[RMDB]
RNA sequence: GGGAACGACUCGAGUAGAGUCGAAAACUGAAGUUCCUGAUGUUUCGGAGGAUCUGAACGGCGAACAAAUUAGCGGAUGUGCUGUUGUUCCAGAAAACGGUGAAAUUCGGUUACUUUCAGGGAUGUGAGCAGUGCACCCAUUCGUGGGUGCACUGCUAAAAGAAACAACAACAACAAC
Reactivity to 2A3 in 0.01 (KOAc 150mM, MgCl2 10mM, bicine 150mM(pH8.5), 24C), signal-to-noise 1, nucleotides 027 to 126: c080u010g090a080a040g070u020u000c000c000u000g000a000u020g010u000u000u010c150g000g000a140g030g000a000u000c040u110g000a010a000c010g100g100c150g060a070a000c000a030a030a000u170u210a090g000c000g100g160a120u210g220u200g090c000u010g000u050u050g010u000u000c010c000a020g020a000a010a020a040c000g010g010u040g020a000a060a080u000u000c040g030g010u090u050a090c000u040u060u020c000a040g000g010g000a020u040g000u190g180
The record gives the reactivity of an RNA of 177 nucleotides to 2A3. For 2A3, 390 sequencing reads were counted. The reactions ran in a buffer of 150 mM KOAc, 10 mM MgCl2 and 150 mM bicine (pH 8.5), at 24 C.